Background: Chemical mapping of a 207-nucleotide RNA with 2A3 and DMS. The reactions ran in a buffer of 150 mM KOAc, 10 mM MgCl2 and 150 mM bicine (pH 8.5), at 24 C. DMS adducts were read by reverse transcription with MarathonRT. Reactivities are given for positions 27 through 156.
RNA sequence: GGGAACGACUCGAGUAGAGUCGAAAAGGUGCUCUGAAUGGAGUGCUCUACUGAGAUUAUAAAAUUGAAGGUAAGCUAUUAUCUCUUACAACAGGGCAGGGCUUGUUGGAAUAGGCGGUAAAGUCUAAAAACUACCUCACCUUCGGGUGAGGUAGAAGGAAAGAAAAAUGUUCGCAUUUUUCUUUCCAAAAGAAACAACAACAACAAC
Reactivity to 2A3 in 0.01 (KOAc 150mM, MgCl2 10mM, bicine 150mM(pH8.5), 24C), signal-to-noise 3, nucleotides 027 to 156: g050g030u020g010c010u000c000u010g140a120a120u210g020g000a000g010u030g010c000u030c040u040a050c050u070g020a020g010a080u080u070a100u170a210a220a110a060u060u080g030a070a000g030g030u030a030a000g000c030u050a110u120u060a050u260c020u010c000u030u100a050c020a100a010c010a040g000g020g020c000a000g000g030g020c040u020u000g020u030u010g020g020a120a120u040a040g030g000c030g010g070u160a100a070a020g010u010c020u040a060a000a000a040a040c000u000a000c000c010u000c000a000c000c000u020u050c240g060g000g000u010g000a010g000g000u000a000g000a000a000
Reactivity to DMS in 0.01 (KOAc 150mM, MgCl2 10mM, bicine 150mM(pH8.5), 24C), signal-to-noise 1, nucleotides 027 to 156: g010g040u000g010c010u000c020u070g010a170a170u030g030g000a080g050u000g030c010u000c040u000a110c060u020g020a300g000a090u000u020a170u000a100a100a080a150u010u000g010a240a190g030g020u000a070a150g000c090u040a070u000u010a070u000c000u000c000u000u000a130c050a090a200c030a060g010g010g050c000a090g060g000g020c050u000u100g000u000u000g000g020a010a140u000a030g010g000c040g000g000u010a020a050a130g020u060c040u000a010a120a060a150a150c000u000a010c020c000u000c010a000c010c040u000u020c280g090g070g000u010g020a000g000g000u000a000g000a030a110